[RMDB]
RNA sequence: GGGAACGACUCGAGUAGAGUCGAAAAUAGACAAGGUCAGAAAAAAAUCGCUUUAGACUUGCUAGAUUCCGCUAUGAAUUUUGCUAAAGCAGAGUUACAGAAACCAUUAGAUGCGGUUGAUCUAGAAAAAACAGUUAUUGUUCGCAAUAACUGUUUUAAAAGAAACAACAACAACAAC
Reactivity to 2A3 in 0.01 (KOAc 150mM, MgCl2 10mM, bicine 150mM(pH8.5), 24C), signal-to-noise 3, nucleotides 027 to 126: u110a010g060a030c050a030a040g040g020u070c040a040g250a130a070a020a010a010a020a070u100c070g010c040u090u070u040a040g020a060c010u020u070g000c000u020a000g000a030u090u000c010c020g000c020u030a050u140g050a070a020u030u050u050u030g030c040u210a190a070a030g000c010a000g010a010g020u000u070a130c000a050g080a120a100a020c040c010a020u100u150a070g040a160u100g020c020g000g000u040u160g000a000u000c030u020a000g000a080a070
Reactivity to DMS in 0.01 (KOAc 150mM, MgCl2 10mM, bicine 150mM(pH8.5), 24C), signal-to-noise 6, nucleotides 027 to 126: u010a090g000a170c060a050a050g010g020u000c030a180g020a020a020a050a130a080a110a090u000c100g010c090u010u000u000a080g000a100c050u000u000g000c020u000a010g000a070u000u000c010c030g010c040u000a240u000g010a040a030u000u000u000u000g010c010u010a060a070a150g000c000a030g000a030g010u000u000a080c060a060g000a120a070a130c130c080a080u010u010a090g010a120u000g010c040g000g010u010u010g000a050u000c010u000a020g010a000a060